[RMDB]
RNA sequence: GGGAACGACUCGAGUAGAGUCGAAAAUCGCACGCGCCCGGCACAGACUCUGUUCUUGGUUCGCGGCCUGAGCCAGGGACGAGUGCGACUGGGGCACACGGCGCGCGUCCGCGGGGCGGGCGGCCGGCCCUACUCCACACUUCGGUGUGGAGUAGGGAAAAGAAACAACAACAACAAC
Reactivity to DMS in 0.01 (KOAc 150mM, MgCl2 10mM, bicine 150mM(pH8.5), 24C), signal-to-noise 2, nucleotides 027 to 126: u060c000g040c080a070c060g010c060g030c020c000c000g010g030c070a060c020a150g000a170c020u010c010u020g010u000u000c020u000u030g010g000u000u000c020g030c220g000g080c100c170u000g000a000g000c030c020a040g020g000g000a020c020g000a040g010u000g020c030g020a200c070u000g010g000g000g020c060a060c090a230c010g000g000c000g010c030g000c000g020u000c000c000g060c230g000g010g000g000c010g000g000g020c020g000g030c000c040g000g000
Reactivity to 2A3 in 0.01 (KOAc 150mM, MgCl2 10mM, bicine 150mM(pH8.5), 24C), signal-to-noise 2, nucleotides 027 to 126: u060c010g100c040a060c050g050c020g160c010c000c000g030g000c060a070c010a090g190a080c020u050c020u220g000u010u020c010u040u050g020g020u070u030c010g030c080g140g120c060c110u120g000a020g000c010c000a030g010g000g010a010c010g020a010g000u060g030c030g060a060c030u070g000g010g050g030c030a010c000a000c000g010g000c020g000c020g020c000g050u020c020c030g290c100g080g070g010g020c010g000g090g000c000g050g050c010c000g060g020
Structure probing data (DMS and 2A3) for a 177-nucleotide construct. The DMS profile rests on 2,629 reads. For 2A3, 3,201 sequencing reads were counted. Conditions: 150 mM KOAc, 10 mM MgCl2 and 150 mM bicine (pH 8.5), 24 C.